[RMDB]
RNA sequence: GGGAACGACUCGAGUAGAGUCGAAAAGAGCGAUUAGACAAAGGGGUAGAGCUACAUAUUAGAUAGCUGUAUAAUCGUUCAAGUUACAUCAAAACAUCUUCAAUAUUAAUUACUUACUUUCCUUUCUGCCAGAGUACGGUAUUCGUACCGUACUCAACUGUUUACGUAUGUUCGCAUACGUAAACAGAAAAGAAACAACAACAACAAC
Reactivity to DMS in 0.01 (KOAc 150mM, MgCl2 10mM, bicine 150mM(pH8.5), 24C), signal-to-noise 2, nucleotides 027 to 156: g000a030g030c020g020a120u000u000a000g010a140c030a070a080a110g020g000g020g040u000a060g000a080g000c010u010a010c030a090u010a190u010u020a170g010a160u000a020g000c030u000g000u010a070u000a050a060u010c040g020u000u010c060a110a150g000u000u020a090c060a110u000c060a110a100a080a050c060a070u000c040u000u010c040a050a130u000a090u020u020a070a090u000u000a050c030u000u000a080c040u000u010u000c000c000u000u000u010c000u000g020c060c060a190g010a050g020u000a000c010g020g020u000a020u000u000c300g000u000a000c000c000g020u000a000c000u000c010a020a010
Reactivity to 2A3 in 0.01 (KOAc 150mM, MgCl2 10mM, bicine 150mM(pH8.5), 24C), signal-to-noise 9, nucleotides 027 to 156: g010a010g000c000g000a000u010u020a030g020a070c060a050a110a060g050g020g040g020u070a040g020a010g070c000u010a010c020a070u270a140u190u160a090g170a280u020a010g030c000u010g010u030a040u010a010a010u010c010g000u010u010c010a020a020g030u040u130a090c050a100u120c080a060a090a050a080c030a110u070c080u260u100c090a070a090u110a090u260u200a120a090u120u060a060c030u080u040a040c000u060u100u090c000c000u030u050u060c030u050g070c050c040a040g000a000g000u000a000c000g000g000u010a000u010u060c080g030u010a000c000c000g000u000a000c000u000c000a000a000
Structure probing data (DMS and 2A3) for a 207-nucleotide construct. Conditions: 150 mM KOAc, 10 mM MgCl2 and 150 mM bicine (pH 8.5), 24 C. For 2A3, 7,416 sequencing reads were counted. The data come from the RNA Mapping Database (RMDB), library M2RFPK.